Chemical mapping of a 207-nucleotide RNA with 2A3.
The RNA was probed in 150 mM KOAc, 10 mM MgCl2 and 150 mM bicine (pH 8.5) at 24 C.
RNA sequence: GGGAACGACUCGAGUAGAGUCGAAAAAUGUUUUCGAACAUUUACGAGGGGUCCAUCGAUCUCCGUUAAGCUUGGAUUUAUACUGAAGCCUCCACGGUAUUGUCAGCUUGUCAGCGGAGGGAGGACGGAGGCACCCGCAUUUAAACUUCGGUUUAAACUACUUUAAUCCCUUCGGGGAUUAAAGUAGAAAAGAAACAACAACAACAAC
Reactivity to 2A3 in 0.01 (KOAc 150mM, MgCl2 10mM, bicine 150mM(pH8.5), 24C), signal-to-noise 2, nucleotides 027 to 156: a010u040g000u000u040u050u090c160g030a020a000c020a030u020u040u140a130c060g050a180g020g060g000g060u010c000c000a060u300c030g000a010u000c000u000c000c010g030u070u210a100a090g010c050u220u300g020g000a080u100u300u070a020u110a000c000u010g020a050a010g010c000c000u000c010c000a020c000g000g030u020a000u000u050g070u060c040a060g100c180u120u150g170u250c030a000g010c030g000g000a010g010g000g020a000g000g000a000c060g010g010a010g010g000c010a010c000c000c000g010c030a050u000u050u100a000a010a040c030u120u120c140g130g000u060u080u100a110a030a060